The record gives the reactivity of an RNA of 177 nucleotides to 2A3 and DMS. DMS adducts were read by reverse transcription with MarathonRT.
RNA sequence: GGGAACGACUCGAGUAGAGUCGAAAAUCCUUGCGGAACUUUAUGUCGGGUUGGUAAAAACCCUUAUGAUGGUGAUGUAUCACUAGACAAUAACCGGAUGGGUAAAGUCUUUAAAAUGAUCGAGGGGAGCUUUUAUCCUAUUCGUAGGAUAAAAGCUAAAAGAAACAACAACAACAAC
Reactivity to 2A3 in 0.01 (KOAc 150mM, MgCl2 10mM, bicine 150mM(pH8.5), 24C), signal-to-noise 5, nucleotides 027 to 126: u010c010c000u010u030g090c050g020g030a100a040c000u120u180u080a070u130g160u050c030g000g040g000u020u050g040g110u160a040a100a020a030a040c010c000c000u030u050a140u110g060a030u050g000g080u010g000a040u070g080u160a130u060c000a010c050u010a010g010a030c010a070a170u130a120a040c030c000g150g030a090u190g090g000g030u060a080a040a000g000u000c000u030u130u070a060a160a050a020u110g030a030u060c030g010a020g000g010g000g000
Reactivity to DMS in 0.01 (KOAc 150mM, MgCl2 10mM, bicine 150mM(pH8.5), 24C), signal-to-noise 5, nucleotides 027 to 126: u010c000c000u000u020g010c090g020g010a100a050c050u010u010u020a020u020g010u010c090g010g000g020u000u010g000g010u000a060a060a080a060a050c020c000c020u010u000a050u020g010a070u000g000g010u010g020a080u040g030u020a040u010c040a040c070u010a030g000a030c030a040a180u010a130a100c030c030g000g020a100u030g010g000g000u000a060a090a150g010u000c020u000u020u020a040a050a100a060u010g000a040u000c040g000a060g010g000g010g000